[RMDB]
About this RNA:
An RNA of 207 nucleotides, treated with DMS and 2A3 and read out base by base. For DMS, 2,177 sequencing reads were counted. For 2A3, 846 sequencing reads were counted.

RNA sequence: GGGAACGACUCGAGUAGAGUCGAAAAUAUUGGUGAAAGUGCAUAUUCUUUUUUCUUAGGGGUGAAAGCUUGAGUUGAGGUGAUCGUAUAAGUAAAUAGAACACAUCAAAAGUGUAUAUAGAUUCUGUUGGCCUAGGGCCUGAAGCCUCAGUUGACACUAGGCGUAAUUAUUCGUAAUUACGCCUAGAAAAGAAACAACAACAACAAC
Reactivity to DMS in 0.01 (KOAc 150mM, MgCl2 10mM, bicine 150mM(pH8.5), 24C), signal-to-noise 1, nucleotides 027 to 156: u000a040u000u000g030g030u000g030a070a070a150g040u010g000c050a120u000a110u010u020c010u000u000u000u000u000u000c030u000u000a050g030g050g010g020u000g010a070a040a090g020c060u020u000g010a140g040u000u000g010a060g040g010u000g010a130u000c050g030u000a110u020a040a160g000u020a050a040a130u000a060g020a070a130c040a020c020a070u000c100a040a040a100a300g030u000g020u000a080u000a130u000a090g030a170u010u000c050u000g010u000u010g010g000c020c020u010a050g050g050g020c020c020u020g010a110a200g020c000c000u030c050a080g010u000u020g010a110c060a130
Reactivity to 2A3 in 0.01 (KOAc 150mM, MgCl2 10mM, bicine 150mM(pH8.5), 24C), signal-to-noise 2, nucleotides 027 to 156: u100a010u000u040g020g000u070g050a100a090a060g100u060g100c050a070u060a180u260u080c080u110u130u090u040u060u010c030u030u080a070g000g000g010g060u050g080a150a020a020g000c020u060u060g030a030g040u040u040g030a000g020g040u040g020a070u060c040g000u120a070u020a170a090g030u080a050a020a030u040a060g070a060a000c000a000c000a000u090c080a060a070a080a060g010u040g000u020a020u010a000u010a140g040a020u010u040c020u030g120u090u010g030g000c010c000u060a090g090g000g020c010c000u020g020a030a000g010c010c000u010c050a010g000u010u020g090a020c020a030